[RMDB]
Structure probing data (2A3 and DMS) for a 207-nucleotide construct. For DMS the reverse transcriptase was MarathonRT. Source: RMDB library M2RFPK, as collected in RNAgym.

RNA sequence: GGGAACGACUCGAGUAGAGUCGAAAAUGCUGUCGUUGACAGCGCCCAACGCUUCACAACCUGAAAGAAGCGCCUGUGAUCAGGACGGUUGAUCCAUUUACCGGUGCAGACCUCUGCAAACACCGGGUUUAACAAGCAUCUUUCGAGAUGCUUGUAAUCGCUUAUAUAGAUUCGUCUAUAUAAGCGAAAAAGAAACAACAACAACAAC
Reactivity to 2A3 in 0.01 (KOAc 150mM, MgCl2 10mM, bicine 150mM(pH8.5), 24C), signal-to-noise 4, nucleotides 027 to 156: u110g020c000u000g010u030c100g300u080u270g010a000c000a000g010c000g030c000c000c010a050a050c010g000c020u000u000c010a020c000a120a030c010c000u000g000a000a000a000g010a000a000g000c000g030c000c000u110g070u190g110a250u290c000a000g010g000a010c030g000g000u000u020g030a050u040c030c010a060u060u080u150a070c010c010g010g000u000g010c020a020g110a300c030c120u210c060u120g030c010a040a110a010c060a010c010c000g000g000g000u020u100u060a020a010c000a000a000g000c000a000u000c000u020u090u150c170g080a010g000a010u000g000c000u000u000g000u000a000a020
Reactivity to DMS in 0.01 (KOAc 150mM, MgCl2 10mM, bicine 150mM(pH8.5), 24C), signal-to-noise 2, nucleotides 027 to 156: u000g020c000u010g000u000c010g010u000u000g020a080c000a030g000c020g010c030c030c020a100a070c000g020c000u010u010c010a210c060a080a160c020c040u000g000a140a200a290g000a040a020g000c020g050c020c010u010g030u000g020a180u010c060a070g080g020a100c060g010g040u000u000g000a290u010c110c040a300u010u000u000a080c020c000g020g000u010g000c000a090g000a110c130c070u000c110u000g000c020a300a110a070c010a020c000c000g000g000g000u040u000u000a070a030c020a000a040g000c020a000u000c000u000u010u020c290g030a070g010a010u000g020c010u000u000g030u010a040a100
For 2A3, 2,072 sequencing reads were counted.